An RNA of 177 nucleotides, treated with DMS and 2A3 and read out base by base. As a SHAPE reagent, 2A3 marks flexible, mostly unpaired nucleotides at the ribose 2'-OH.
RNA sequence: GGGAACGACUCGAGUAGAGUCGAAAAUAUUAGAUUUAAUCGAAAGUUCAAGCAUACAGGGUAGAAUAGUAGAUGUAAAUCUAGAGGAUUAUUAUAUUGUUAUUCAAGUUGAGUAUCCUGCUGUCACCAUUCCACCUGACUUCGGUCAGGUGGAAUGAAAAGAAACAACAACAACAAC
Reactivity to DMS in 0.01 (KOAc 150mM, MgCl2 10mM, bicine 150mM(pH8.5), 24C), signal-to-noise 2, nucleotides 027 to 126: u030a080u030u000a010g030a020u000u000u000a050a030u000c010g010a080a220a110g000u000u020c000a140a260g080c030a110u030a080c240a100g040g000g000u020a240g010a010a000u000a030g010u000a090g000a010u000g000u000a000a030a000u000c000u000a000g010a100g000g000a110u080u040a090u000u010a070u030a050u010u010g010u000u010a020u040u000c080a020a090g020u010u000g000a090g020u030a040u000c000c010u000g000c110u000g000u010c060a070c170
Reactivity to 2A3 in 0.01 (KOAc 150mM, MgCl2 10mM, bicine 150mM(pH8.5), 24C), signal-to-noise 2, nucleotides 027 to 126: u270a040u040u050a090g000a030u000u040u060a020a020u000c010g030a040a000a000g030u000u000c080a020a220g050c000a150u190a210c080a070g120g100g070u170a040g080a040a000u020a070g080u020a010g030a000u030g060u090a000a020a030u000c000u000a040g010a070g020g000a010u010u060a030u170u030a010u270a060u170u150g080u110u090a050u060u110c050a150a080g090u130u150g110a010g070u060a070u050c000c000u030g030c100u090g120u090c060a010c030
The RNA was probed in 150 mM KOAc, 10 mM MgCl2 and 150 mM bicine (pH 8.5) at 24 C. 2A3 adducts were read by reverse transcription with SuperScript II with manganese. Source: RMDB library OK1LIB, as collected in RNAgym. For DMS the reverse transcriptase was MarathonRT.